[RMDB]
RNA sequence: GGGAACGACUCGAGUAGAGUCGAAAACCUUCAGUUUGGAGGAGGUCGUGGCCAGGCUGCGGGUCAUCCUGCGACGCGCGGGCAAGGGCAACAAGGGACCACGUAAUGUUCGACUGACGUUCGCCGAGUGUCACGUGAGAUUCGUCUCACGUGACACAAAAGAAACAACAACAACAAC
Reactivity to DMS in 0.01 (KOAc 150mM, MgCl2 10mM, bicine 150mM(pH8.5), 24C), signal-to-noise 2, nucleotides 027 to 126: c000c010u010u020c040a060g000u010u000u010g020g010a070g030g010a110g020g010u000c070g050u000g010g020c040c010a080g000g040c020u000g000c080g020g020g060u000c060a150u010c060c090u020g020c090g020a100c030g040c050g000c040g030g010g020c110a090a080g000g000g000c050a070a070c080a080a170g030g000g000a050c030c010a080c030g000u010a150a060u000g010u000u000c020g000a050c050u000g000a110c050g020u000u000c010g020c020c020g020a150
Reactivity to 2A3 in 0.01 (KOAc 150mM, MgCl2 10mM, bicine 150mM(pH8.5), 24C), signal-to-noise 2, nucleotides 027 to 126: c010c000u060u050c060a130g000u040u270u200g090g010a060g020g060a040g000g050u030c030g040u050g050g000c000c000a060g040g060c010u030g040c020g090g000g010u010c030a060u120c020c090u040g060c080g090a120c070g070c010g020c000g150g000g040c050a120a110g120g000g000c030a090a000c020a050a070g160g020g050a070c030c020a060c030g020u120a020a070u300g030u020u010c000g000a000c000u020g010a000c020g030u050u000c120g040c120c010g020a040